[RMDB]
RNA sequence: GGGAACGACUCGAGUAGAGUCGAAAAUUUCUGGUGUCACAGGCGGGAAUGUUAGUUAGUAGGUAGACUUAGAUCCCAUUUCUGUCCUGCUCCCAGGAAGAUUCUUAGGUCCUCUUCAAUCCAGCAGCCCCUCCCAGAGGUGUGAUCAGCAGGAUGACUGAUCCUCAUUAUUCGUAAUGAGGAUCAGAAAAGAAACAACAACAACAAC
Reactivity to DMS in 0.01 (KOAc 150mM, MgCl2 10mM, bicine 150mM(pH8.5), 24C), signal-to-noise 2, nucleotides 027 to 156: u000u000u000c020u010g010g020u010g020u030c140a070c020a050g010g020c040g000g010g030a040a040u020g010u000u010a110g010u010u000a130g040u010a070g020g000u010a090g010a120c070u010u000a180g000a140u000c050c100c010a160u000u000u000c010u000g020u010c010c000u000g030c030u010c170c030c010a080g020g000a020a000g010a160u010u000c060u000u000a070g020g000u000c020c010u000c010u000u000c100a060a130u000c030c020a080g040c030a200g030c000c010c010c020u000c070c080c070a200g010a110g010g010u010g020u000g010a050u000c060a080g030c050a060g010g010a060u000g000a220
Reactivity to 2A3 in 0.01 (KOAc 150mM, MgCl2 10mM, bicine 150mM(pH8.5), 24C), signal-to-noise 3, nucleotides 027 to 156: u000u020u000c000u030g000g040u160g100u190c080a000c000a050g000g010c000g010g010g020a020a000u020g020u100u120a080g040u100u070a040g020u060a050g070g120u070a070g100a130c040u070u030a040g060a240u130c000c000c000a010u010u010u000c020u010g240u260c000c000u010g020c050u020c000c000c000a000g010g010a000a020g000a030u070u040c030u070u100a090g000g060u030c030c000u030c050u080u050c010a040a120u030c030c040a040g040c030a040g010c080c010c030c000u000c030c050c000a000g020a010g020g010u030g010u040g030a040u060c030a010g010c000a010g040g030a020u070g020a010